This 207-nucleotide RNA was probed chemically with DMS and 2A3. The RNA was probed in 150 mM KOAc, 10 mM MgCl2 and 150 mM bicine (pH 8.5) at 24 C.
RNA sequence: GGGAACGACUCGAGUAGAGUCGAAAAUGGUCACUAAAAAUGUACAACCCUGAAAUUGCCACACAUACGAAUUUCAUUUGGGGACAGUUGAGAUGUUAUAAAUUGUAUAGAGUGGCAUUCCACCUCAGACAUAUACACACACACGCAAAAAAUGAAGGAUAUAUUGUGCAUUCGUGCACAAUAUAUCAAAAGAAACAACAACAACAAC
Reactivity to DMS in 0.01 (KOAc 150mM, MgCl2 10mM, bicine 150mM(pH8.5), 24C), signal-to-noise 2, nucleotides 027 to 156: u000g010g040u000c020a140c050u020a020a080a070a160a070u000g000u010a050c030a060a140c040c020c000u000g000a070a020a040u000u000g020c020c040a090c100a120c050a110u000a080c040g000a110a100u000u000u000c080a130u010u020u060g030g030g010g030a060c050a040g020u000u000g010a140g010a040u000g000u000u000a150u010a060a050a100u010u000g000u000a100u010a090g010a070g050u010g010g020c050a090u010u010c030c030a060c040c030u020c050a090g020a090c030a060u010a070u000a010c080a040c020a040c050a050c060a060c020g060c060a000a020a080a050a040a110u000g010a090a150g010
Reactivity to 2A3 in 0.01 (KOAc 150mM, MgCl2 10mM, bicine 150mM(pH8.5), 24C), signal-to-noise 5, nucleotides 027 to 156: u090g040g010u040c000a010c080u090a090a020a060a070a120u110g030u060a030c030a040a050c030c010c000u010g010a060a070a050u070u040g070c040c010a040c000a010c010a060u080a070c060g080a080a050u030u060u070c030a030u020u090u160g020g000g010g040a020c030a040g010u080u140g120a100g010a090u060g030u060u030a070u040a110a110a100u130u050g010u010a030u040a060g100a010g050u010g010g020c000a010u060u040c010c010a060c010c010u040c010a010g040a070c030a030u130a010u110a080c020a000c000a000c000a000c020a020c070g090c090a060a020a010a070a030a060u290g040a080a020g110